[RMDB]
RNA sequence: GGGAACGACUCGAGUAGAGUCGAAAAGGAAUCUCAGCCAUUUACGAAAGCUUCAACACACCAAAGUUGUUCAAAUCAGUCUAUGCGUAUUUGUUAUGGCUGACAGAGGAACACGGCUCUGACAUCCACCAUGUCACAGCUUCGGCUGUGACAUGGUAAAAGAAACAACAACAACAAC
Reactivity to 2A3 in 0.01 (KOAc 150mM, MgCl2 10mM, bicine 150mM(pH8.5), 24C), signal-to-noise 3, nucleotides 027 to 126: g030g000a070a040u000c010u000c020a000g000c040c010a060u090u080u190a030c050g100a110a030a010g000c000u040u030c010a050a020c040a000c030a060c090c110a130a060a020g060u050u070g040u150u110c040a070a100a040u090c050a010g130u000c030u100a080u140g000c010g030u120a240u000u090u080g030u090u090a000u030g000g000c010u000g000a000c050a030g020a000g050g020a040a000c050a000c070g030g000c040u030c000u010g060a020c010a030u000c000c000
Reactivity to DMS in 0.01 (KOAc 150mM, MgCl2 10mM, bicine 150mM(pH8.5), 24C), signal-to-noise 1, nucleotides 027 to 126: g100g000a270a060u000c210u030c010a090g010c000c000a000u000u050u000a070c040g000a110a110a130g000c000u000u080c140a000a070c090a010c030a170c010c030a000a100a090g000u000u000g000u000u050c170a010a050a100u000c100a000g020u030c020u010a150u030g000c030g010u000a190u000u020u000g000u000u000a090u000g010g010c000u010g000a010c020a000g000a040g000g010a030a000c110a000c000g000g000c000u000c000u000g000a150c050a150u010c000c010
Notes:
The data come from the RNA Mapping Database (RMDB), library OK1LIB. This 177-nucleotide RNA was probed chemically with 2A3 and DMS. 2A3 adducts were read by reverse transcription with SuperScript II with manganese. Reactivities are given for positions 27 through 126. The RNA was probed in 150 mM KOAc, 10 mM MgCl2 and 150 mM bicine (pH 8.5) at 24 C.